Chemical mapping of a 207-nucleotide RNA with 2A3 and DMS. For DMS, 3,375 sequencing reads were counted. Reactivities are given for positions 27 through 156. The RNA was probed in 150 mM KOAc, 10 mM MgCl2 and 150 mM bicine (pH 8.5) at 24 C. It was measured as part of the RMDB library OK3TST. For 2A3, 2,707 sequencing reads were counted.
RNA sequence: GGGAACGACUCGAGUAGAGUCGAAAAGAAGGUGGGUCAGGGCUCGGACCGCACCGAUUAGAUGUAACUAUUCCGAGCCCAUUAAUGGCGUUUUCGCCUAGGUCAGAGCACGCCGUGGCUCGACCCAAAUAAAUAAAUAAUAUCACGGCGGAUAGAAGAUACUAGUAUGAUUCGUCAUACUAGUAUCAAAAGAAACAACAACAACAAC
Reactivity to 2A3 in 0.01 (KOAc 150mM, MgCl2 10mM, bicine 150mM(pH8.5), 24C), signal-to-noise 4, nucleotides 027 to 156: g140a030a040g000g000u000g020g010g020u020c120a110g030g010g000c000u000c000g000g000a020c030c040g100c020a020c010c010g000a020u020u140a030g030a020u100g110u170a080a060c090u100a170u130u080c000c000g000a000g000c000c000c000a000u010u130a040a110u060g010g000c000g090u050u010u200u250c020g020c000c020u010a020g000g000u040c140a140g000a010g000c010a010c020g000c010c000g010u000g000g000c000u000c010g000a010c000c030c000a080a110a050u140a040a040a000u170a050a040a030u220a040a020u110a030u120c000a000c000g000g000c160g000g010a070u130a110g100a100a020
Reactivity to DMS in 0.01 (KOAc 150mM, MgCl2 10mM, bicine 150mM(pH8.5), 24C), signal-to-noise 2, nucleotides 027 to 156: g000a120a100g020g050u010g010g010g000u000c070a080g000g020g020c040u020c010g000g010a040c160c270g000c020a050c010c000g000a170u000u000a140g030a070u010g000u000a090a100c050u000a170u030u010c000c010g000a030g020c010c000c000a090u010u000a010a070u010g020g000c010g010u010u000u010u000c090g010c010c000u000a030g010g030u000c030a160g010a050g000c010a080c050g020c020c010g050u010g010g020c040u000c020g000a010c000c000c040a010a040a160u000a050a050a090u010a020a050a120u010a110a160u000a110u000c020a030c010g000g000c000g050g020a120u000a080g010a100a300